[RMDB]
An RNA of 177 nucleotides, treated with 2A3 and DMS and read out base by base. For 2A3 the reverse transcriptase was SuperScript II with manganese. For DMS the reverse transcriptase was MarathonRT.
RNA sequence: GGGAACGACUCGAGUAGAGUCGAAAAGAUAUGGACCAGGAUAUAAGACAGAGGGUAGUCGGAAACGACUACGACCUCAAUGACGUAUCUGGUCCUAAGUCAAAACCCUUCGCUUCGGCGAAGGGAAUCACCAGACUAACUUCGGUUAGUCUGGUGAAAAAGAAACAACAACAACAAC
Reactivity to 2A3 in 0.01 (KOAc 150mM, MgCl2 10mM, bicine 150mM(pH8.5), 24C), signal-to-noise 1, nucleotides 027 to 126: g000a010u000a020u070g010g000a000c030c010a040g300g110a030u040a000u100a190a280g230a150c200a100g010a000g010g010g000u010a000g030u000c000g000g040a010a010a020c000g010a010c000u010a030c040g110a050c000c000u000c000a020a290u160g040a020c000g000u000a030u000c010u020g000g000u000c000c000u000a000a000g010u040c000a010a030a150a300c000c000c000u020u010c030g000c020u070u060c300g210g000c010g000a000a000g000g000g040a020a010
Reactivity to DMS in 0.01 (KOAc 150mM, MgCl2 10mM, bicine 150mM(pH8.5), 24C), signal-to-noise 1, nucleotides 027 to 126: g000a010u000a020u030g000g000a000c020c000a000g030g010a020u000a000u010a010a300g060a150c090a030g010a040g030g000g000u000a000g000u000c000g010g030a040a000a020c010g020a010c000u000a000c020g010a170c000c000u030c000a250a230u010g000a030c100g000u030a000u000c010u020g010g000u010c000c000u000a000a060g000u000c000a090a090a160a120c000c000c000u000u000c000g020c000u010u010c300g030g000c020g010a000a000g030g000g000a000a020